Structure probing data (DMS and 2A3) for a 207-nucleotide construct. It was measured as part of the RMDB library OK3TST. The DMS profile rests on 2,644 reads. 2A3 adducts were read by reverse transcription with SuperScript II with manganese.

RNA sequence: GGGAACGACUCGAGUAGAGUCGAAAAGCUGAACACGCCGAACAUGGACGAAAUGAGCGUCCACGAAUUCGCCGCCGGCCGUGUGAGCGAUCUGCUGGCGAAGCACGAAGUGAAAGACCCGAUCGGCUAUAAGACGAUUGGCUUUGCGCCGUACGCGCACGAUGGAAUGAUUCGUCAUUCCAUCGUGAAAAGAAACAACAACAACAAC
Reactivity to DMS in 0.01 (KOAc 150mM, MgCl2 10mM, bicine 150mM(pH8.5), 24C), signal-to-noise 2, nucleotides 027 to 156: g020c020u000g000a040a110c020a060c050g020c030c020g040a090a300c030a020u000g020g000a020c000g030a130a240a140u010g020a180g000c010g000u000c020c000a000c050g000a110a160u010u000c020g070c000c040g040c040c040g010g060c010c000g060u000g040u010g020a180g020c050g000a020u010c110u000g010c050u010g020g000c000g000a090a080g000c030a090c020g000a140a080g000u000g000a040a040a110g020a070c100c000c020g020a040u000c020g020g000c040u010a210u000a090a140g030a070c000g000a090u000u000g040g010c030u000u000u000g020c040g010c000c040g000u000a120c050g000c100g000
Reactivity to 2A3 in 0.01 (KOAc 150mM, MgCl2 10mM, bicine 150mM(pH8.5), 24C), signal-to-noise 3, nucleotides 027 to 156: g000c020u040g040a090a010c040a020c080g030c030c010g070a060a070c080a120u080g000g010a000c040g060a090a150a190u270g040a140g080c010g020u010c000c000a010c020g030a010a130u070u050c010g030c030c010g020c000c000g010g000c030c010g000u080g050u070g040a010g000c010g020a030u020c000u070g020c050u120g010g000c030g000a020a020g010c040a020c100g060a090a020g030u070g070a070a040a010g050a020c000c000c040g030a040u010c000g000g000c040u060a050u030a290a040g070a010c030g070a110u040u090g020g000c000u060u080u150g010c040g000c000c020g020u080a040c060g010c040g000